This 177-nucleotide RNA was probed chemically with 2A3 and DMS.
Reactivities are given for positions 27 through 126.
[RMDB]
RNA sequence: GGGAACGACUCGAGUAGAGUCGAAAACACAGCGCAUCUUGCGCGAUGCUGCUAGGAGCGACAGGAUAGGCAAGGGAGCAGCCCCACAGGUGCAGCCACUCAGCGGAGUGCUGGCCAAAAUCAUGCACUGCACUAGCUUUUUCGAAAGCUAGUGCAGAAAAGAAACAACAACAACAAC
Reactivity to 2A3 in 0.01 (KOAc 150mM, MgCl2 10mM, bicine 150mM(pH8.5), 24C), signal-to-noise 2, nucleotides 027 to 126: c020a000c040a040g000c070g030c010a010u140c110u220u260g050c060g000c050g020a050u060g020c040u050g000c000u020a070g080g090a090g040c040g070a080c100a100g000g120a090u100a100g050g060c010a000a080g060g000g000a040g000c000a000g020c000c000c030c010a020c070a030g120g000u300g140c000a000g070c110c000a040c010u000c030a070g200c110g300g000a000g000u030g010c020u010g020g000c010c000a110a030a010a000u150c060a050u130g030c030a010
Reactivity to DMS in 0.01 (KOAc 150mM, MgCl2 10mM, bicine 150mM(pH8.5), 24C), signal-to-noise 2, nucleotides 027 to 126: c080a070c240a080g010c010g000c000a130u010c080u010u000g040c110g030c040g000a040u000g010c000u010g000c080u040a100g010g000a110g030c050g010a080c090a070g040g020a100u000a040g020g020c010a070a130g000g000g000a100g010c060a080g000c040c020c000c040a080c170a160g030g000u000g000c010a040g000c060c050a020c020u000c040a190g000c210g020g020a030g000u000g000c010u000g030g000c000c060a040a100a060a060u010c090a080u000g050c140a250
Description:
The RNA was probed in 150 mM KOAc, 10 mM MgCl2 and 150 mM bicine (pH 8.5) at 24 C. For DMS, 1,266 sequencing reads were counted. For DMS the reverse transcriptase was MarathonRT.